RNA sequence: GGGAACGACUCGAGUAGAGUCGAAAAAAGAUUAGAUAGUUUAGAGGGCGUAGGUCCUGUAACAACUAGAAAAUUAUCCGAUGCAGGUGUCCACAACGUCAUGGACCUCAUCGUCAGGGGUCCUGUAUACCAUAUUUGUCUUCGGACAAAUAUGGUAAAAAGAAACAACAACAACAAC
Reactivity to DMS in 0.01 (KOAc 150mM, MgCl2 10mM, bicine 150mM(pH8.5), 24C), signal-to-noise 5, nucleotides 027 to 126: a080a070g000a030u000u000a030g000a300u000a010g010u000u000u000a110g000a010g000g010g000c010g000u010a120g010g020u000c000c000u010g010u000a040a070c260a060a030c020u000a030g000a170a110a040a020u000u000a070u000c030c020g010a100u010g010c080a080g020g020u000g020u000c020c030a070c110a070a080c150g000u000c120a090u000g010g000a020c000c000u010c020a060u000c220g000u010c200a080g000g000g000g000u000c010c000u000g000u000a160
Reactivity to 2A3 in 0.01 (KOAc 150mM, MgCl2 10mM, bicine 150mM(pH8.5), 24C), signal-to-noise 2, nucleotides 027 to 126: a000a010g060a040u050u040a040g030a080u000a010g050u060u020u030a090g030a010g040g010g000c060g020u080a050g000g210u040c020c000u030g030u020a050a060c040a000a000c040u050a010g050a060a070a000a010u100u040a070u150c050c040g000a040u130g030c040a000g080g030u000g040u050c010c000a050c010a150a030c050g120u090c020a060u030g020g000a010c000c000u010c000a100u110c040g150u040c060a010g020g010g000g000u020c000c010u000g010u010a110

Conditions: 150 mM KOAc, 10 mM MgCl2 and 150 mM bicine (pH 8.5), 24 C.
The record gives the reactivity of an RNA of 177 nucleotides to DMS and 2A3.
Values cover nucleotides 27 to 126.
For 2A3, 1,637 sequencing reads were counted.
It was measured as part of the RMDB library OK2TST.
For DMS the reverse transcriptase was MarathonRT.
For 2A3 the reverse transcriptase was SuperScript II with manganese.